[RMDB]
Source information: The record gives the reactivity of an RNA of 177 nucleotides to 2A3 and DMS.
RNA sequence: GGGAACGACUCGAGUAGAGUCGAAAAGAAAGAAAGAAAGGCACAUUCGUGCUAUAUGGCACACAGUUGAUUUAUAUUAUUUUCUAGUUCAUAAGUCUGUUGAGUGCCAUAGAGCAAGAAGUGUGAAUACAUGGCUAUGCUUCGGCAUAGCCAUGUAAAAAGAAACAACAACAACAAC
Reactivity to 2A3 in 0.01 (KOAc 150mM, MgCl2 10mM, bicine 150mM(pH8.5), 24C), signal-to-noise 2, nucleotides 027 to 126: g070a000a040a060g060a000a090a000g100a110a150a000g090g020c040a010c000a230u000u000c030g000u010g030c010u000a000u000a000u000g000g000c000a000c000a000c000a000g000u010u010g000a000u010u050u000a000u010a010u210u110a230u100u160u110u130c150u160a160g060u010u010c000a000u000a000a000g010u000c010u010g000u050u020g030a050g010u000g020c020c000a000u000a000g000a000g000c010a030a030g000a000a000g060u000g000u010g010a000a000
Reactivity to DMS in 0.01 (KOAc 150mM, MgCl2 10mM, bicine 150mM(pH8.5), 24C), signal-to-noise 1, nucleotides 027 to 126: g010a060a080a090g000a040a050a100g030a060a110a130g000g000c000a040c000a070u000u010c010g020u000g050c000u020a020u020a000u000g000g040c000a010c010a100c000a040g000u000u000g000a000u000u000u000a000u000a040u060u000a010u000u000u100u020c280u060a170g000u030u010c210a000u000a000a000g020u000c010u000g000u000u000g040a060g000u040g050c000c000a020u000a000g000a010g000c000a000a020g010a000a030g000u000g010u080g030a130a110

For DMS, 1,441 sequencing reads were counted. Reactivities are given for positions 27 through 126. Conditions: 150 mM KOAc, 10 mM MgCl2 and 150 mM bicine (pH 8.5), 24 C.